[RMDB]
RNA sequence: GGGAACGACUCGAGUAGAGUCGAAAACGACGAGCGCUACGAUGCCGCACAGGUCGAUCGCUUCGUCGAGGCGCUCGAACUGUUCGCGAUCGGCUGGAGCUGGGGCGGCGCAUGCAGCCUUGCGAUACGUGCUAAUGGGUUUCGACCCAUUAGCACGAAAAGAAACAACAACAACAAC
Reactivity to 2A3 in 0.01 (KOAc 150mM, MgCl2 10mM, bicine 150mM(pH8.5), 24C), signal-to-noise 2, nucleotides 027 to 126: c040g110a000c020g000a010g020c040g000c010u050a020c010g070a030u120g050c010c010g030c000a020c000a030g060g000u050c010g010a020u000c010g020c040u120u110c030g110u010c050g000a040g090g160c140g020c020u010c000g040a090a040c030u130g090u240u120c110g000c010g040a010u000c030g020g000c030u050g070g130a130g110c120u060g030g000g090g000c050g000g000c010g000c020a030u140g000c000a010g000c000c030u050u070g030c010g080a090u060a230
Reactivity to DMS in 0.01 (KOAc 150mM, MgCl2 10mM, bicine 150mM(pH8.5), 24C), signal-to-noise 2, nucleotides 027 to 126: c050g000a160c040g010a030g000c040g020c010u020a090c100g010a120u020g040c040c020g010c020a050c030a160g000g030u000c000g030a000u000c000g030c000u000u020c040g010u000c090g000a110g000g020c110g000c050u000c010g000a040a050c070u000g040u040u000c190g000c000g020a050u000c000g000g000c020u000g010g020a090g020c100u000g000g000g000g020c020g000g000c010g010c130a060u000g010c030a050g000c040c080u000u000g030c020g000a120u020a090